[RMDB]
RNA sequence: GGGAACGACUCGAGUAGAGUCGAAAAUAGUCUUAUAGCUGUAUUCGUGGCGAUCUAUAAGACGUGCCCUUCAUCGCCUCGAAUACAGGAAGGGCACACGGUGGAGAUGCGAAAGCAUUUCCACCGAGCACCAUGUAGCCUUCGGGCUACAUGGUGCAAAAGAAACAACAACAACAAC
Reactivity to 2A3 in 0.01 (KOAc 150mM, MgCl2 10mM, bicine 150mM(pH8.5), 24C), signal-to-noise 1, nucleotides 027 to 126: u150a000g050u020c010u060u100a060u010a010g070c010u020g000u000a000u010u090c050g020u020g000g020c000g000a000u000c020u000a060u000a160a060g090a030c010g000u000g000c000c000c000u000u000c020a020u000c000g010c000c030u030c300g020a020a010u030a010c000a000g040g000a000a020g010g000g060c020a000c000a000c000g000g000u000g000g010a020g000a000u000g030c030g040a040a020a020g010c000a000u000u000u020c000c000a000c000c000g020a010